An RNA of 177 nucleotides, treated with DMS and 2A3 and read out base by base.
The RNA was probed in 150 mM KOAc, 10 mM MgCl2 and 150 mM bicine (pH 8.5) at 24 C.
2A3 adducts were read by reverse transcription with SuperScript II with manganese.
For DMS, 4,835 sequencing reads were counted.

RNA sequence: GGGAACGACUCGAGUAGAGUCGAAAAGAUAUGGAGCUUUAAGGGAGAAGAGUCGGAAACGAUAACUUCGAGGAUCUUAUAGCUCCUAAGUCAAAGCGUGAAUGCACCUUCGGGUGCAUUCACGCAACAAAGAAAAUGUGUUCGCACAUUUUCUUUGAAAAGAAACAACAACAACAAC
Reactivity to DMS in 0.01 (KOAc 150mM, MgCl2 10mM, bicine 150mM(pH8.5), 24C), signal-to-noise 3, nucleotides 027 to 126: g000a030u000a300u020g010g000a010g020c000u000u000u000a000a020g020g010g020a100g010a020a010g010a300g000u000c000g000g010a060a050a070c000g010a010u000a070a120c000u000u000c000g000a100g030g000a060u000c000u000u000a010u000a010g000c000u000c010c010u000a010a040g000u000c010a090a130a130g010c000g040u000g000a020a010u000g000c000a020c000c000u000u020c190g010g020g020u000g000c000a000u000u000c010a000c000g000c000a010a040
Reactivity to 2A3 in 0.01 (KOAc 150mM, MgCl2 10mM, bicine 150mM(pH8.5), 24C), signal-to-noise 2, nucleotides 027 to 126: g010a000u050a030u140g000g000a010g000c010u010u010u030a010a000g030g080g010a110g020a020a000g020a010g000u000c020g000g040a050a030a000c010g000a020u090a300a260c010u000u010c030g100a270g090g070a090u010c010u000u000a010u020a020g000c010u030c010c000u010a060a000g020u020c040a130a080a010g050c000g000u000g010a020a000u000g010c040a000c020c060u060u170c300g090g000g000u030g000c030a000u000u010c010a000c030g030c010a000a000